[RMDB]
RNA sequence: GGGAACGACUCGAGUAGAGUCGAAAACAGUCAAGGUGAAGGCGGGCCAGACCAUCGCCGCAUUCUACCAGAGCACCGUCAUGAUCUUUGGCACGAUGGCUCGCUACAUGCGUAGAGUUAGGGAAAAGGUAGCUAUUACGUUCGCGUAAUAGCUACCAAAAGAAACAACAACAACAAC
Reactivity to DMS in 0.01 (KOAc 150mM, MgCl2 10mM, bicine 150mM(pH8.5), 24C), signal-to-noise 3, nucleotides 027 to 126: c070a110g020u000c060a090a100g010g010u010g010a080a100g010g010c020g000g010g000c060c070a100g010a110c040c060a080u010c020g040c010c040g010c090a070u010u000c030u000a060c090c000a090g020a050g020c030a100c020c010g020u020c050a060u000g000a060u000c060u000u000u000g000g010c020a030c040g000a050u000g000g000c120u000c070g010c000u000a060c130a080u000g000c090g030u010a030g010a050g000u000u010a080g000g000g000a100a070a120a100
Reactivity to 2A3 in 0.01 (KOAc 150mM, MgCl2 10mM, bicine 150mM(pH8.5), 24C), signal-to-noise 2, nucleotides 027 to 126: c010a000g080u090c030a060a080g000g010u050g040a070a020g030g000c010g030g050g000c020c040a050g010a070c030c030a060u090c050g020c040c010g000c010a010u060u000c020u040a040c010c010a030g020a010g020c030a030c070c020g050u040c020a180u060g070a130u030c080u110u090u120g050g000c010a000c080g060a060u060g000g000c040u020c060g010c000u050a070c050a140u170g030c060g010u020a020g000a010g080u070u080a090g020g030g000a000a130a000a000